[RMDB]
RNA sequence: GGGAACGACUCGAGUAGAGUCGAAAAAACGAAACGUGCUCCUUUAGUGGCCACUGCGUAAUAUUUUCGGUAGGAGCUUUGAAACGAAUACGUAGGCAUAAUUUUACAGAAAGGAAUCCAAAGUGUAUGAUGAUCGAGUAUUCGUACUCGAUCAUCAAAAAGAAACAACAACAACAAC
Reactivity to DMS in 0.01 (KOAc 150mM, MgCl2 10mM, bicine 150mM(pH8.5), 24C), signal-to-noise 2, nucleotides 027 to 126: a060a010c080g020a090a040a060c040g040u000g000c100u000c000c040u000u000u010a100g010u050g000g000c120c000a110c040u010g020c040g000u000a000a030u000a030u000u000u000u040c020g000g030u020a130g000g000a070g020c090u010u080u060g030a040a050a050c000g010a110a110u000a060c080g030u000a010g050g010c020a070u020a040a050u020u020u020u010a040c030a080g020a050a070a080g000g000a010a000u000c160c010a030a010a110g020u000g030u030a170
Reactivity to 2A3 in 0.01 (KOAc 150mM, MgCl2 10mM, bicine 150mM(pH8.5), 24C), signal-to-noise 1, nucleotides 027 to 126: a000a000c050g020a090a020a000c070g000u080g000c050u060c030c000u040u070u090a120g030u180g100g020c000c030a130c070u030g000c020g150u110a070a010u020a260u120u070u000u250c000g010g010u030a050g010g070a050g000c000u050u010u100g020a020a010a000c010g000a020a020u090a090c000g000u090a050g000g040c010a000u040a110a050u200u150u060u040a090c060a000g070a060a150a000g060g060a000a040u000c060c040a010a200a000g000u110g020u070a010
Record summary
This 177-nucleotide RNA was probed chemically with DMS and 2A3. Values cover nucleotides 27 to 126. Conditions: 150 mM KOAc, 10 mM MgCl2 and 150 mM bicine (pH 8.5), 24 C. DMS adducts were read by reverse transcription with MarathonRT.